Structure probing data (2A3 and DMS) for a 177-nucleotide construct.
The RNA was probed in 150 mM KOAc, 10 mM MgCl2 and 150 mM bicine (pH 8.5) at 24 C.
DMS adducts were read by reverse transcription with MarathonRT.
[RMDB]
RNA sequence: GGGAACGACUCGAGUAGAGUCGAAAAAUCUUGAAGAAGCGAAAGAAGACUUCUCCUUUCUAGGAUCUCUUCCAGGAACUAAGUACAUGAUUCGUGGGAAUCAUGAUUAUUGGAGUUCUGCAUCAGGCAGGUGUAAGUCGUUCGCGACUUACACCUGAAAAGAAACAACAACAACAAC
Reactivity to 2A3 in 0.01 (KOAc 150mM, MgCl2 10mM, bicine 150mM(pH8.5), 24C), signal-to-noise 2, nucleotides 027 to 126: a000u000c000u010u050g020a030a040g010a040a030g050c050g100a180a010a050g130a120a110g080a110c040u080u040c030u070c030c020u030u150u000c060u080a080g000g100a100u040c030u020c060u070u000c000c000a030g040g030a010a010c020u000a090a000g080u000a010c000a000u010g010a010u080u000c060g120u300g230g290g010a020a020u000c010a010u030g030a060u040u220a020u000u040g120g070a050g030u010u040c000u020g080c000a130u110c090a080g090g100
Reactivity to DMS in 0.01 (KOAc 150mM, MgCl2 10mM, bicine 150mM(pH8.5), 24C), signal-to-noise 1, nucleotides 027 to 126: a130u000c040u000u010g000a110a000g020a120a140g000c070g020a040a060a060g000a070a070g000a150c110u000u000c030u000c020c010u000u020u000c110u000a090g000g000a060u000c120u000c040u010u000c000c020a220g000g010a010a030c020u000a080a040g020u010a060c010a000u000g000a020u000u020c000g020u000g020g010g000a060a000u000c000a000u000g000a110u000u000a000u000u010g010g000a070g020u000u000c000u000g030c110a070u020c090a090g010g020